[RMDB]
RNA sequence: GGGAACGACUCGAGUAGAGUCGAAAAUUGACGUUACUGUCGGCGUUGGCCAGUCAGGAGUGCGCACGUCAGUCUUCUGCAAGGAGGCAGGCCCCUACCACCUGUUGGUUAACGACCAAAGCGUGACACUCUCGACAGUAUUCGUACUGUCGAGAGUAAAAGAAACAACAACAACAAC
Reactivity to 2A3 in 0.01 (KOAc 150mM, MgCl2 10mM, bicine 150mM(pH8.5), 24C), signal-to-noise 2, nucleotides 027 to 126: u080u040g040a010c030g010u030u050a050c030u070g120u160c010g010g010c000g000u020u030g020g010c000c000a040g110u150c010a000g040g000a040g060u120g040c120g010c040a020c050g020u000c010a020g000u000c010u050u000c000u090g290c130a140a180g000g000a020g050g000c000a020g030g000c040c000c000c010u030a040c020c010a080c040c000u030g020u060u000g000g000u010u030a020a000c030g070a140c020c010a020a010a040g030c030g020u030g030a020c020
Reactivity to DMS in 0.01 (KOAc 150mM, MgCl2 10mM, bicine 150mM(pH8.5), 24C), signal-to-noise 4, nucleotides 027 to 126: u010u010g020a080c080g000u000u010a070c070u000g010u010c150g000g020c010g010u000u000g000g010c000c010a020g010u000c020a010g010g000a110g010u010g010c170g020c140a060c220g020u000c020a050g000u000c020u010u010c010u010g020c300a160a120g020g000a040g020g000c010a020g020g000c010c040c170c030u000a060c050c020a130c000c000u010g000u010u000g000g000u000u000a020a040c030g000a100c010c010a020a090a110g010c060g010u000g010a100c100